Description: The data come from the RNA Mapping Database (RMDB), library RFM100. This 177-nucleotide RNA was probed chemically with 2A3. Values cover nucleotides 27 to 126. 2A3 adducts were read by reverse transcription with SuperScript II with manganese. The reactions ran in a buffer of 150 mM KOAc, 10 mM MgCl2 and 150 mM bicine (pH 8.5), at 24 C.
RNA sequence: GGGAACGACUCGAGUAGAGUCGAAAAUAGAUACUUGUGUGUAUAUAUAUUUGUGGUUUUUGUUAUUUUUCUACUUAUAGAUGGCUAAAAUCUGAGUUUGAAAGAUGGCCACCAUAAAUUCUUAAAAGCUUCAUUAAUUUUUCGAAAUUAAUGAAGCAAAAGAAACAACAACAACAAC
Reactivity to 2A3 in 0.01 (KOAc 150mM, MgCl2 10mM, bicine 150mM(pH8.5), 24C), signal-to-noise 1, nucleotides 027 to 126: u090a010g130a040u100a080c040u100u070g030u030g010u000g050u110a010u000a000u010a010u000a050u300u010u000g010u000g000g060u000u000u000u100u250g010u000u000a010u000u000u010u000u000c010u000a020c000u010u040a110u110a300g030a030u000g060g090c130u180a060a070a140a000u000c000u010g010a000g010u030u290u090g010a000a000a000g000a000u000g000g010c010c010a000c000c000a020u040a100a050a000u050u000c010u050u060a100a130a000a000